RNA sequence: GGGAACGACUCGAGUAGAGUCGAAAAGAUCUUGUAUUUGCCAAAUACCUACUAAAUGCUGAGGGUUUACAUGUGUUACAUCACUUCUUAGUUCCUCUUAGAUUUUUUUAUGAAUGUGGGAAUUGAAACUAUUAAAGUACCUUAUUCAAGAUCAUGAGUACGUCCAGUAGUUCGCUACUGGACGUACAAAAGAAACAACAACAACAAC
Reactivity to 2A3 in 0.01 (KOAc 150mM, MgCl2 10mM, bicine 150mM(pH8.5), 24C), signal-to-noise 2, nucleotides 027 to 156: g000a020u020c010u010u010g020u100a070u040u090u080g060c050c020a080a040a010u060a060c000c010u020a040c020u080a150a030a060u070g050c050u040g000a010g030g000g000u090u110u080a010c040a050u140g010u030g070u080u120a030c040a050u200c000a060c030u090u110c000u120u090a040g020u100u070c050c020u020c000u020u030a000g000a050u120u050u020u130u000u050u040a120u160g050a100a050u110g030u030g000g040g020a030a010u030u120g040a030a070a030c030u080a120u300u240a110a080a080g040u050a060c030c000u050u080a040u070u040c010a000a010g010a070u020c000a000u060g000a000